[RMDB]
RNA sequence: GGGAACGACUCGAGUAGAGUCGAAAAGGAAACACGGGAUUCGGGUUCGGGAUAACCUAGGGACCCAGGGAUUGACUCUCUUGCCAUCCUUCGGGAAGGGCACGGGCUGGGUUAAAUCGGGAUUUAAAGCACAUUGCUAUUUCGAUAGCAAUGUGCUAAAAGAAACAACAACAACAAC
Reactivity to DMS in 0.01 (KOAc 150mM, MgCl2 10mM, bicine 150mM(pH8.5), 24C), signal-to-noise 2, nucleotides 027 to 126: g020g000a180a180a140c060a090c090g000g010g000a190u010u010c220g010g010g010u000u010c110g000g010g030a190u010a080a080c060c050u000a110g080g020g020a110c030c000c020a110g000g020g000a090u000u010g010a060c170u000c130u020c010u000u010g000c010c010a120u000c000c000u000u010c190g040g010g020a050a080g010g000g010c040a060c180g000g000g000c210u000g000g000g020u000u020a010a030a150u000c100g010g010g000a260u000u000u000a050a120

Annotation: This 177-nucleotide RNA was probed chemically with DMS. DMS adducts were read by reverse transcription with MarathonRT. Source: RMDB library OK2TST, as collected in RNAgym. The RNA was probed in 150 mM KOAc, 10 mM MgCl2 and 150 mM bicine (pH 8.5) at 24 C.